[RMDB]
RNA sequence: GGGAACGACUCGAGUAGAGUCGAAAAGAUAUGGAACAGAUUGAGGGAGCUGACAUCUCGGAAACGAGAUGCCAGCGAGGAUCUCACUGUCUGUUCCUAAGUCAAAGCGAGGACUUCGGUCCUCGCAUCCGUAUGGAACGUUCGCGUUCCAUACGGAAAAAGAAACAACAACAACAAC
Reactivity to DMS in 0.01 (KOAc 150mM, MgCl2 10mM, bicine 150mM(pH8.5), 24C), signal-to-noise 2, nucleotides 027 to 126: g000a060u010a300u010g000g020a030a000c000a010g000a040u000u000g000a020g030g000g000a060g030c000u000g000a000c000a000u000c000u000c000g000g000a110a000a200c000g030a010g020a010u000g000c000c000a000g000c020g000a030g020g010a060u010c010u000c010a050c300u000g050u000c000u000g030u000u000c000c000u010a010a050g000u000c050a090a080a120g040c020g000a010g000g000a050c000u010u020c150g010g010u000c000c000u000c010g000c000a030
Reactivity to 2A3 in 0.01 (KOAc 150mM, MgCl2 10mM, bicine 150mM(pH8.5), 24C), signal-to-noise 1, nucleotides 027 to 126: g040a000u090a000u080g000g000a020a020c000a000g040a020u080u090g070a020g060g000g020a100g020c000u000g000a020c000a050u000c000u010c010g050g060a050a120a030c010g010a000g000a000u000g000c000c000a000g000c000g000a020g000g010a010u010c010u040c030a040c210u150g000u110c010u020g000u000u020c020c000u000a120a010g030u000c060a170a040a000g040c010g000a000g000g020a010c000u070u120c300g060g010u000c000c000u000c010g020c020a000